[RMDB]
RNA sequence: GGGAACGACUCGAGUAGAGUCGAAAACUAUGUGCUGUAAGGCACAUACGAAAGAGGAAUUCCUAGUAAGUGUGUAUCAACAAUGGAUAUUGAAUAAGUCCCUGUAGCUUGUACACACCGCCCGUCAGUUCCGCGGGGUAUUCGUACCCCGCGGAACAAAAGAAACAACAACAACAAC
Reactivity to 2A3 in 0.01 (KOAc 150mM, MgCl2 10mM, bicine 150mM(pH8.5), 24C), signal-to-noise 1, nucleotides 027 to 126: c000u000a000u010g000u040g000c000u000g030u200a240a100g210g000c000a000c000a000u000a030c070g060a120a000a000g130a010g000g060a000a100u020u040c000c000u170a150g100u300a000a040g000u000g000u000g000u040a020u290c000a000a000c000a000a000u000g000g000a000u060a060u300u300g110a100a110u220a160a090g020u070c000c000c000u000g220u080a010g010c000u000u000g000u000a000c000a000c000a000c030c000g000c050c000c000g140u210c070a080
Chemical mapping of a 177-nucleotide RNA with 2A3. The reactions ran in a buffer of 150 mM KOAc, 10 mM MgCl2 and 150 mM bicine (pH 8.5), at 24 C. The data come from the RNA Mapping Database (RMDB), library RFM100.